[RMDB]
RNA sequence: GGGAACGACUCGAGUAGAGUCGAAAACCUACUGAUGGCGUGUCAUUGUAAUAGUAAUUGAACUUAGUACGAGAGGAACCGUUCAUUCACGUAAUUGGUAUUUACAUCUGUUUGAUAAGACAAUGUUCGCUGUACAUACGUUCGCGUAUGUACAGCGAAAAGAAACAACAACAACAAC
Reactivity to 2A3 in 0.01 (KOAc 150mM, MgCl2 10mM, bicine 150mM(pH8.5), 24C), signal-to-noise 2, nucleotides 027 to 126: c000c000u000a000c010u000g020a020u030g060g010c010g000u030g030u000c050a060u100u220g100u110a100a070u090a250g170u090a150a130u020u060g000a000a000c000u000u000a010g000u010a010c010g010a000g000a020g090g000a000a000c000c000g000u000u000c000a000u040u030c010a000c000g000u030a060a010u010u070g010g000u000a060u050u190u080a080c040a040u070c080u120g210u040u080u080g170a190u190a160a040g030a010c020a020a030u070g050u050u000